Conditions: 150 mM KOAc, 10 mM MgCl2 and 150 mM bicine (pH 8.5), 24 C. Chemical mapping of a 207-nucleotide RNA with DMS and 2A3. For 2A3, 9,840 sequencing reads were counted.

RNA sequence: GGGAACGACUCGAGUAGAGUCGAAAAAUUCGCCGAGAAGCAUCUGUUCGAAAUCAUCGGGAGUGAUCCAGAUGACGGUCCUGCCAUGAGACCGCAACGAGAGCAUGUCGCAUCGAAUGGACUCGGGUAUACUAGGUGACGUUCGCGUCACCUAGAACAAUUUACGCAAGUUCGCUUGCGUAAAUUGAAAAGAAACAACAACAACAAC
Reactivity to DMS in 0.01 (KOAc 150mM, MgCl2 10mM, bicine 150mM(pH8.5), 24C), signal-to-noise 4, nucleotides 027 to 156: a130u000u010c030g040c010c010g010a050g010a080a060g030c110a130u000c010u000g010u000u000c010g010a060a090a110u010c020a040u010c010g020g030g020a080g030u010g010a240u000c000c000a060g000a030u000g000a070c000g020g000u000c020c020u010g020c060c300a130u010g000a050g000a030c010c020g010c020a060a050c050g010a140g020a190g010c120a180u010g010u000c050g010c070a250u000c020g000a050a090u000g010g000a070c000u020c010g010g000g000u010a050u000a140c000u000a020g010g000u010g000a020c010g010u000u000c270g020c000g040u010c010a010c000c000u000a000g000a040a170
Reactivity to 2A3 in 0.01 (KOAc 150mM, MgCl2 10mM, bicine 150mM(pH8.5), 24C), signal-to-noise 8, nucleotides 027 to 156: a000u120u070c060g040c030c010g010a020g020a060a040g100c040a040u010c010u030g010u030u020c020g020a050a060a090u040c010a010u020c030g030g010g010a040g040u120g040a070u020c000c010a030g000a050u040g030a040c020g000g000u000c010c020u070g200c060c010a130u110g030a040g010a190c010c000g010c030a040a070c070g060a020g010a020g160c070a090u220g090u180c070g000c050a040u030c020g020a000a000u010g010g000a000c000u010c010g010g010g030u060a050u020a140c010u000a000g000g000u000g010a000c000g000u030u040c220g020c000g100u000c000a000c000c000u000a000g000a000a000
For DMS, 10,459 sequencing reads were counted.
2A3 adducts were read by reverse transcription with SuperScript II with manganese.